The data come from the RNA Mapping Database (RMDB), library OK1LIB. Structure probing data (DMS and 2A3) for a 177-nucleotide construct. For 2A3, 5,619 sequencing reads were counted.

[RMDB]
RNA sequence: GGGAACGACUCGAGUAGAGUCGAAAAGAAUCUACCGGAAGAUGUGAUUCAAACCUCACCACGUCCCAGUUCACGGAUCUGUUUUGCUGGGUCCUGGCAGCAUCGGAAGGGGAGCCACAACCGGCAACCACACAUUCCAAUUCGUUGGAAUGUGUGGAAAAGAAACAACAACAACAAC
Reactivity to DMS in 0.01 (KOAc 150mM, MgCl2 10mM, bicine 150mM(pH8.5), 24C), signal-to-noise 3, nucleotides 027 to 126: g000a000a000u040c010u030a100c070c030g000g060a300a100g000a030u010g000u000g010a090u040u000c190a050a110a090c060c090u020c090a120c010c000a010c300g040u000c000c010c000a060g010u000u010c170a100c070g050g000a040u000c160u020g000u000u010u030u060g000c070u020g030g050g000u000c010c120u000g000g060c190a080g010c080a040u000c010g020g000a290a120g000g000g010g000a090g020c070c000a000c050a090a080c120c040g000g000c100a100a250
Reactivity to 2A3 in 0.01 (KOAc 150mM, MgCl2 10mM, bicine 150mM(pH8.5), 24C), signal-to-noise 6, nucleotides 027 to 126: g060a000a030u020c030u060a190c020c020g040g050a060a020g030a080u080g040u050g050a080u080u050c060a100a080a140c010c020u080c030a050c030c000a020c030g020u020c010c020c000a010g040u090u080c050a020c060g070g050a250u070c080u140g150u040u100u120u100g020c010u050g020g000g010u000c010c020u010g020g000c030a060g020c000a040u060c010g020g020a030a000g040g020g000g000a010g020c010c010a060c020a070a100c030c020g020g000c020a020a030
Reactivities are rounded to 0.1 and cut off at 0 and 3. For DMS, 2,985 sequencing reads were counted. For DMS the reverse transcriptase was MarathonRT. Values cover nucleotides 27 to 126. 2A3 adducts were read by reverse transcription with SuperScript II with manganese.